[RMDB]
RNA sequence: GGGAACGACUCGAGUAGAGUCGAAAAGAUAUGGAUUCCCUGUAGGGAGCCUGGGAUCGGAAACGAUCCCAAGGCUUUGAUCUAUUGGGAAUCCUAAGUCAAAGUUAGGUCUCUUCGGAGACCUAACCAUUAGUAAACAGUUCGCUGUUUACUAAUGAAAAGAAACAACAACAACAAC
Reactivity to 2A3 in 0.01 (KOAc 150mM, MgCl2 10mM, bicine 150mM(pH8.5), 24C), signal-to-noise 2, nucleotides 027 to 126: g010a000u070a030u110g000g010a020u000u000c000c000c000u010g020u010a050g030g160g250a020g010c020c010u000g000g010g010a010u020c000g020g020a050a050a030c020g000a000u010c020c010c010a020a040g000g000c020u030u010u040g010a020u000c000u000a010u020u030g000g000g000a020a000u010c000c000u010a030a020g000u010c050a190a090a050g000u010u000a000g000g010u000c000u010c000u030u100c300g130g010a000g000a000c010c000u000a000a000c000
Reactivity to DMS in 0.01 (KOAc 150mM, MgCl2 10mM, bicine 150mM(pH8.5), 24C), signal-to-noise 6, nucleotides 027 to 126: g010a030u000a250u010g000g000a010u000u000c010c000c000u000g010u010a010g010g010g010a010g020c000c000u000g000g010g010a010u000c000g010g000a060a060a120c000g000a010u000c000c000c000a000a020g020g010c000u000u000u010g000a140u010c000u000a010u000u000g010g000g000a020a000u000c000c000u000a000a060g010u010c020a110a120a180g000u000u000a000g010g000u000c000u000c000u000u010c270g020g000a020g010a000c000c000u000a000a000c010